Chemical mapping of a 177-nucleotide RNA with 2A3 and DMS. The reactions ran in a buffer of 150 mM KOAc, 10 mM MgCl2 and 150 mM bicine (pH 8.5), at 24 C. It was measured as part of the RMDB libraries RFM100 and RFMREP.
[RMDB]
RNA sequence: GGGAACGACUCGAGUAGAGUCGAAAAGGCAAACGUCUGGUGAAGGAUUUUAGUGUCAAAGGACAGAUGGUUAGCUUACAGGAGGAAGGCGAGGAGUAUACGCCGCGUCAGGGACUAUAUGCUAACUGAAAGUUCAUGUAUUCGUACAUGAACUUUCAAAAGAAACAACAACAACAAC
Reactivity to 2A3 in 0.01 (KOAc 150mM, MgCl2 10mM, bicine 150mM(pH8.5), 24C), signal-to-noise 8, nucleotides 027 to 126: g040g000c020a040a050a010c040g030u010c050u050g050g010u110g080a090a050g050g030a070u050u060u060u140a160g040u100g030u070c050a100a060a040g100g020a040c030a030g070a040u090g040g010u020u020a020g000c000u030u050a040c030a030g000g060a020g030g050a130a020g010g000c010g010a030g010g000a020g030u090a070u020a130c100g010c000c000g000c010g010u020c030a020g050g030g000a010c010u010a020u010a010u200g020c030u020a020a050c010u020
Reactivity to DMS in 0.01 (KOAc 150mM, MgCl2 10mM, bicine 150mM(pH8.5), 24C), signal-to-noise 8, nucleotides 027 to 126: g010g000c030a070a090a080c110g000u010c010u000g000g010u020g000a150a100g000g000a060u020u010u020u010a090g010u010g000u000c040a050a100a130g010g000a060c070a040g000a090u020g000g010u000u000a030g000c020u010u010a050c110a040g000g000a120g010g000a180a180g000g020c040g000a050g010g010a090g010u030a100u030a120c220g000c010c020g010c040g010u010c030a080g000g020g000a200c020u000a060u010a050u010g010c030u000a020a040c070u010